[RMDB]
RNA sequence: GGGAACGACUCGAGUAGAGUCGAAAAAAAAAGAUAUGGAGUUGAAGCUCAUCGAUCUAUACCGGCGACGUAUAUCGGAAACGAUAUACGCCGUGUAUAGGGAGAGCUUGGACUCCUAAGUCAAAAACCUACUAUGAGGCUUCGGCCUCAUAGUAGGAAAAGAAACAACAACAACAAC
Reactivity to DMS in 0.01 (KOAc 150mM, MgCl2 10mM, bicine 150mM(pH8.5), 24C), signal-to-noise 1, nucleotides 027 to 126: a030a040a090a060a040g010a000u000a110u000g000g020a050g000u000u000g000a070a120g000c000u030c000a300u000c280g000a070u010c000u000a000u020a000c180c300g030g000c050g000a030c040g000u010a000u000a000u000c000g000g050a010a010a010c000g010a010u000a000u000a000c040g010c000c000g020u000g000u000a010u010a030g000g020g000a030g030a020g010c020u000u000g000g000a000c000u000c000c010u000a000a040g030u020c000a050a090a100a120a090

Chemical mapping of a 177-nucleotide RNA with DMS.
The RNA was probed in 150 mM KOAc, 10 mM MgCl2 and 150 mM bicine (pH 8.5) at 24 C.